[RMDB]
RNA sequence: GGGAACGACUCGAGUAGAGUCGAAAACUGGAAACAACCUUGUGGUUCCUGUGGGUCACCCCUCCAAAGCAAUAAAGGAAAAGAAAGGCGAAGACUCACCUGUCGUCGUCGACGAAGGCAGCUGAGCCCAAUCUAAUUGGUUCGCCAAUUAGAUUGGAAAAGAAACAACAACAACAAC
Reactivity to 2A3 in 0.01 (KOAc 150mM, MgCl2 10mM, bicine 150mM(pH8.5), 24C), signal-to-noise 3, nucleotides 027 to 126: c010u020g030g040a100a080a010c020a020a070c000c040u060u100g040u030g040g070u040u000c020c010u050g000u100g020g000g040u170c020a080c020c030c000c020u000c000c050a090a080a040g050c020a000a060u120a290a110a040g100g030a080a050a020a030g090a050a080a000g090g020c070g030a010a010g060a050c000u010c030a010c020c020u050g020u020c020g010u010c010g030u060c030g020a040c050g010a030a010g030g020c000a020g020c020u020g000a000g000c020
Reactivity to DMS in 0.01 (KOAc 150mM, MgCl2 10mM, bicine 150mM(pH8.5), 24C), signal-to-noise 3, nucleotides 027 to 126: c030u000g000g000a080a070a080c040a080a100c050c090u010u000g020u020g020g010u000u000c020c010u000g020u020g010g010g000u010c050a140c060c030c000c030u010c000c020a070a100a110g000c140a070a050u000a030a080a110g020g010a060a050a080a070g000a050a110a100g010g010c060g000a020a050g010a090c000u000c020a050c130c040u000g020u000c000g000u000c020g010u000c170g010a100c070g010a020a030g010g010c040a040g010c110u000g000a080g000c100